Annotation:
This 177-nucleotide RNA was probed chemically with DMS and 2A3. Values cover nucleotides 27 to 126. For DMS, 1,159 sequencing reads were counted. Source: RMDB library OK2TST, as collected in RNAgym. For 2A3 the reverse transcriptase was SuperScript II with manganese.
[RMDB]
RNA sequence: GGGAACGACUCGAGUAGAGUCGAAAACCAGGUAGUCCGGGCUGAGCGAGGCGGUGCCGUAGCCGUCCACGGUGACCUGCACCUCGACACCGCGCUCGGCGGCGGCGCUGAGGGCUUCCUGCAACUACGUGCGGAUAGCAUUCGUGCUAUCCGCACGAAAAGAAACAACAACAACAAC
Reactivity to DMS in 0.01 (KOAc 150mM, MgCl2 10mM, bicine 150mM(pH8.5), 24C), signal-to-noise 1, nucleotides 027 to 126: c070c000a110g000g020u010a020g010u020c050c010g010g010g000c160u000g050a080g020c080g000a140g000g010c150g050g020u010g000c010c020g000u000a190g030c020c070g000u000c140c060a100c030g000g000u000g000a120c160c070u010g000c070a080c070c050u000c050g000a110c100a060c010c000g000c000g000c010u000c020g020g010c000g020g000c030g000g010c020g000c030u010g010a090g000g020g000c070u020u000c000c010u000g010c170a070a080c120u000a090
Reactivity to 2A3 in 0.01 (KOAc 150mM, MgCl2 10mM, bicine 150mM(pH8.5), 24C), signal-to-noise 1, nucleotides 027 to 126: c000c000a000g040g030u020a020g030u050c030c010g050g080g040c080u040g020a020g050c050g020a050g020g040c040g000g030u030g010c010c000g010u010a000g000c010c000g010u100c060c020a040c050g000g040u080g050a070c000c080u110g020c040a090c020c070u100c060g030a030c020a010c010c010g030c030g010c020u010c000g050g000c000g010g020c000g010g040c050g000c030u050g050a200g010g030g020c040u030u030c000c000u020g040c010a040a030c040u110a050